RNA sequence: GGGAACGACUCGAGUAGAGUCGAAAAGUGAGUGUGUGUGUUCGUGUACGUACGUACGAGUGUGAACGUACGUUCGUUCACUCGAGUGUGUACUCACGAGAUCUCGUGUACGAUCACGAACUCACACUCGAGUGAGUACGUUCGUUCGAACUCUCUCCAGUGCUAGUUCAUUCGUGAACUAGCACUGAAAAGAAACAACAACAACAAC
Reactivity to 2A3 in 0.01 (KOAc 150mM, MgCl2 10mM, bicine 150mM(pH8.5), 24C), signal-to-noise 6, nucleotides 027 to 156: g200u160g030a070g030u040g000u010g010u010g020u020g020u060u040c060g010u040g020u060a090c050g020u050a010c060g030u030a020c050g020a020g010u060g010u030g030a020a000c010g010u070a040c060g010u040u030c020g050u030u020c000a000c000u000c000g000a010g000u010g000u020g030u080a080c070u050c090a060c070g020a050g000a070u060c040u010c090g040u070g020u070a110c160g020a150u110c020a010c050g010a030a030c000u010c020a000c000a000c000u000c000g000a000g000u010g000a000g010u030a020c020g010u000u060c020g020u030u020c010g030a070a040c000u010c010u000c000u000c030
Reactivity to DMS in 0.01 (KOAc 150mM, MgCl2 10mM, bicine 150mM(pH8.5), 24C), signal-to-noise 2, nucleotides 027 to 156: g040u010g010a080g040u000g020u000g000u010g000u000g010u000u000c030g050u010g000u010a090c050g000u000a050c090g040u010a070c030g020a120g030u000g020u010g010a040a030c010g020u000a100c090g020u000u000c060g030u000u000c000a130c010u000c050g020a140g030u000g010u000g020u000a080c050u000c060a120c050g000a140g010a080u000c040u000c090g000u010g010u010a060c120g010a220u010c020a100c000g000a070a060c060u000c000a030c020a000c000u000c020g010a060g030u000g000a090g030u000a040c050g020u000u000c080g040u010u010c010g000a080a110c000u000c010u000c010u000c000